[RMDB]
RNA sequence: GGGAACGACUCGAGUAGAGUCGAAAAGAUAUGGAUCGUGAACUACACUGGAGAGGUUCGUCGGAAACGACGAACUACCCACCUAGAGGUGCACGAUCCUAAGUCAAAAUCGUGCUUCGGCACGAAACAAUGAUUGCAAGUUCGCUUGCAAUCAUUGAAAAGAAACAACAACAACAAC
Reactivity to 2A3 in 0.01 (KOAc 150mM, MgCl2 10mM, bicine 150mM(pH8.5), 24C), signal-to-noise 4, nucleotides 027 to 126: g030a010u050a010u100g000g000a010u000c000g020u010g020a070a070c060u230a050c280a040c150u150g060g100a180g020a060g180g000u000u000c000g000u000c000g000g020a000a040a020c010g000a000c010g000a000a000c000u010a010c000c000c000a060c000c010u170a130g050a090g150g010u010g000c000a000c000g000a000u000c000c000u000a020a000g020u000c030a000a000a010a300u060c010g000u000g000c000u070u070c240g130g000c010a010c010g000a000a000a000
Reactivity to DMS in 0.01 (KOAc 150mM, MgCl2 10mM, bicine 150mM(pH8.5), 24C), signal-to-noise 5, nucleotides 027 to 126: g000a040u000a300u010g000g010a000u000c000g030u000g000a040a020c010u010a150c150a130c150u000g000g010a080g020a200g020g000u000u000c000g020u000c000g000g000a080a060a150c010g010a010c000g000a000a000c010u000a060c150c040c050a120c110c060u010a090g010a190g010g020u000g000c010a010c000g010a000u000c000c000u000a020a070g010u010c020a080a070a100a080u000c000g010u000g000c010u000u020c210g020g010c000a010c000g010a010a060a120
Chemical mapping of a 177-nucleotide RNA with 2A3 and DMS. The DMS profile rests on 5,785 reads. Values cover nucleotides 27 to 126. Conditions: 150 mM KOAc, 10 mM MgCl2 and 150 mM bicine (pH 8.5), 24 C. The data come from the RNA Mapping Database (RMDB), library TTRDEL. For 2A3, 12,427 sequencing reads were counted.